[RMDB]
Notes
An RNA of 177 nucleotides, treated with DMS and 2A3 and read out base by base. It was measured as part of the RMDB library OK1LIB. The RNA was probed in 150 mM KOAc, 10 mM MgCl2 and 150 mM bicine (pH 8.5) at 24 C. In probing experiments dimethyl sulfate is read out at A N1 and C N3, which are open when not base-paired. The 2A3 profile rests on 2,196 reads.
RNA sequence: GGGAACGACUCGAGUAGAGUCGAAAAUAAUCAAGAUGAAUCGUUUUUAGUUUGCUUGCUUACCUUAGGGGCCAGUAUGAGAUCCACUUGAAUCUUUUUAUGUAGGCAGAUAGCGACGGAAUUUAAAGGGCUAUAUUUAUUUCGAUAAAUAUAGCCCAAAAGAAACAACAACAACAAC
Reactivity to DMS in 0.01 (KOAc 150mM, MgCl2 10mM, bicine 150mM(pH8.5), 24C), signal-to-noise 2, nucleotides 027 to 126: u030a080a100u000c040a030a070g030a120u040g040a110a080u010c070g010u010u020u020u010u020a090g020u000u010u010g030c010u000u000g000c030u000u000a050c010c040u000u010a130g000g010g010g000c150c160a020g000u000a090u010g020a050g000a010u000c030c040a110c110u000u020g010a070a070u000c010u000u000u000u000u000a030u020g020u000a030g020g000c030a060g000a050u000a020g000c090g010a020c110g000g030a050a060u020u020u010a050a090a050
Reactivity to 2A3 in 0.01 (KOAc 150mM, MgCl2 10mM, bicine 150mM(pH8.5), 24C), signal-to-noise 3, nucleotides 027 to 126: u160a020a060u130c030a020a030g060a080u250g080a030a040u100c050g050u030u100u100u110u100a080g030u000u110u210g010c050u000u000g000c000u030u090a130c000c020u040u070a080g010g000g060g010c020c030a030g040u050a010u160g040a100g010a080u020c030c000a040c030u010u110g040a060a050u050c030u000u100u020u000u000a100u160g110u040a010g010g000c000a000g020a120u040a000g010c020g030a050c030g000g070a050a050u070u110u090a150a090a030